[RMDB]
RNA sequence: GGGAACGACUCGAGUAGAGUCGAAAAGUGGGAGGAGAUGGACAUCCAGUAUGACAGCUUCAUUCGCACUACAGACCCAAAGCAUGCGACGGUCGUCCGAGCCAUUCUGGACAGGGUGUGGGAGAAGCACUCGAACCGAAUUCGUUCGGUUCGAGUGAAAAGAAACAACAACAACAAC
Reactivity to DMS in 0.01 (KOAc 150mM, MgCl2 10mM, bicine 150mM(pH8.5), 24C), signal-to-noise 2, nucleotides 027 to 126: g030u000g050g000g020a110g020g000a050g010a080u020g000g000a130c110a080u000c030c080a140g030u010a100u000g010a110c130a050g020c020u000u000c040a090u010u020c040g000c010a030c060u010a150c150a140g010a110c020c000c040a090a080a100g000c100a040u000g020c060g020a150c140g010g000u000c050g010u010c020c020g020a100g010c070c110a070u000u000c050u000g010g000a030c090a150g000g020g010u000g000u000g000g000g000a090g000a030a090g040
Reactivity to 2A3 in 0.01 (KOAc 150mM, MgCl2 10mM, bicine 150mM(pH8.5), 24C), signal-to-noise 1, nucleotides 027 to 126: g020u000g000g090g000a100g020g020a060g040a080u050g030g010a020c000a050u020c020c000a050g060u210a050u040g030a030c060a020g020c000u050u010c030a280u040u070c040g000c090a020c000u070a070c080a080g120a090c040c000c010a030a070a010g080c030a040u160g010c060g000a050c050g070g030u070c060g030u000c010c030g020a030g050c030c010a040u030u080c050u070g010g000a010c030a060g100g000g010u090g000u120g020g070g020a090g010a050a010g080
The data come from the RNA Mapping Database (RMDB), library OK2TRN. This 177-nucleotide RNA was probed chemically with DMS and 2A3. For DMS the reverse transcriptase was MarathonRT.